[RMDB]
RNA sequence: GGGAACGACUCGAGUAGAGUCGAAAAUUAAACAUGCCUUCUAUUCACUGUGCCAUCUUACAUCCGUAGGUGAUCAGAGGGGAAAAGAAGAGCUAGAGCAACUCCCACACUCAUGAGCGUCCUCAUAAACAUAAGCGGACUUCGGUCCGCUUAUGUUAAAAGAAACAACAACAACAAC
Reactivity to DMS in 0.01 (KOAc 150mM, MgCl2 10mM, bicine 150mM(pH8.5), 24C), signal-to-noise 2, nucleotides 027 to 126: u020u100a110a070a140c160a080u000g000c020c020u000u000c030u000a050u030u010c000a010c020u020g000u000g050c200c070a000u020c010u090u030a000c030a130u120c100c160g000u000a010g000g010u000g000a220u020c000a040g000a000g000g030g020g010a010a020a100a100g020a030a020g000a150g000c030u050a070g020a150g000c260a100a060c100u010c000c000c000a210c140a010c040u020c020a140u030g000a000g000c060g030u000c020c000u050c040a120u040a200
Reactivity to 2A3 in 0.01 (KOAc 150mM, MgCl2 10mM, bicine 150mM(pH8.5), 24C), signal-to-noise 3, nucleotides 027 to 126: u150u110a090a080a010c070a070u160g030c010c000u000u010c010u010a040u020u000c010a000c010u070g050u100g200c030c010a070u050c000u040u050a040c040a140u130c080c090g010u010a030g000g010u000g040a000u060c010a000g090a090g080g000g000g010a000a070a000a000g010a010a010g060a010g000c020u060a030g000a030g060c070a030a120c010u000c010c000c000a010c010a000c000u050c010a070u130g050a000g030c000g020u020c010c010u050c000a070u080a130